[RMDB]
RNA sequence: GGGAACGACUCGAGUAGAGUCGAAAAGGUAAUGAGUUCGCUCAUUACCAAAGAAACCGUGCUAGUCUGAGCGCACAGACUAGCACGGCGCAAAGAAAGAAAAAAGAACCUGGUUCGCCAGGUUCAACACUACUUGAUAGUUCGCUAUCAAGUAGUGAAAAGAAACAACAACAACAAC
Reactivity to 2A3 in 0.01 (KOAc 150mM, MgCl2 10mM, bicine 150mM(pH8.5), 24C), signal-to-noise 4, nucleotides 027 to 126: g000g000u000a000a010u000g000a010g020u030u110c150g070c100u000c000a000u000u000a010c000c000a000a010a000g020a040a050a000c000c000g010u000g010c000u010a010g000u000c000u000g060a050g200c110g000c080a040c010a110g000a000c000u000a000g020c000a000c020g020g000c000g000c030a110a130a010g140a100a100a010g060a030a150a020a020a000a030g000a000a000c010c000u000g000g050u030u030c110g030c040c010a000g000g000u010u000c000a000a000
Reactivity to DMS in 0.01 (KOAc 150mM, MgCl2 10mM, bicine 150mM(pH8.5), 24C), signal-to-noise 5, nucleotides 027 to 126: g000g010u000a000a010u000g000a020g010u000u020c220g030c000u010c000a000u000u010a000c010c000a030a090a090g010a130a160a060c010c000g010u010g010c000u000a000g000u010c000u000g000a120g030c180g000c160a120c000a000g010a020c000u000a010g010c000a000c000g000g000c030g000c120a060a130a130g000a070a090a120g030a010a050a070a090a140a080g000a000a010c000c000u000g000g000u000u010c180g020c000c000a000g010g010u000u000c000a040a100

This 177-nucleotide RNA was probed chemically with 2A3 and DMS. For DMS the reverse transcriptase was MarathonRT. The DMS profile rests on 5,961 reads. The 2A3 profile rests on 8,611 reads. Values cover nucleotides 27 to 126. The RNA was probed in 150 mM KOAc, 10 mM MgCl2 and 150 mM bicine (pH 8.5) at 24 C.